[RMDB]
The data come from the RNA Mapping Database (RMDB), library OK1LIB. Structure probing data (DMS and 2A3) for a 177-nucleotide construct. For DMS the reverse transcriptase was MarathonRT. Conditions: 150 mM KOAc, 10 mM MgCl2 and 150 mM bicine (pH 8.5), 24 C.
RNA sequence: GGGAACGACUCGAGUAGAGUCGAAAAGAAGACGUGACGAAAAGUCACGUCAAUACAGAGACUACGCAACUCUGAAAAACACAACGAAAGUGUAAAAGCGUAGCAGGAUCGAGAGAUCCUGAAAAGAAUAUGCUCAUGGUUUCGACCAUGAGCAUAUAAAAGAAACAACAACAACAAC
Reactivity to DMS in 0.01 (KOAc 150mM, MgCl2 10mM, bicine 150mM(pH8.5), 24C), signal-to-noise 4, nucleotides 027 to 126: g000a220a110g000a020c000g060u010g000a010c000g010a110a100a130a150g010u010c000a010c010g020u000c000a020a040u030a200c050a020g000a000g000a120c000u000a010c000g000c000a100a030c000u000c000u020g000a130a100a070a090a060c010a010c010a080a160c260g010a160a120a060g000u000g000u020a010a050a030a300g000c000g000u000a000g000c020a010g000g000a030u000c000g000a210g010a160g010a010u010c000c000u000g000a060a030a060a110g020a120
Reactivity to 2A3 in 0.01 (KOAc 150mM, MgCl2 10mM, bicine 150mM(pH8.5), 24C), signal-to-noise 3, nucleotides 027 to 126: g130a050a030g000a000c010g000u010g010a010c020g080a150a120a000a060g000u010c000a000c000g000u000c000a000a000u060a020c000a000g020a000g030a050c000u000a000c010g000c000a090a050c000u020c000u020g050a050a000a010a040a000c030a030c030a090a090c130g220a160a150a110g010u030g000u020a020a050a000a000g020c000g000u000a000g020c010a000g000g010a000u010c000g020a010g000a010g000a140u000c000c000u000g010a010a000a000a000g030a010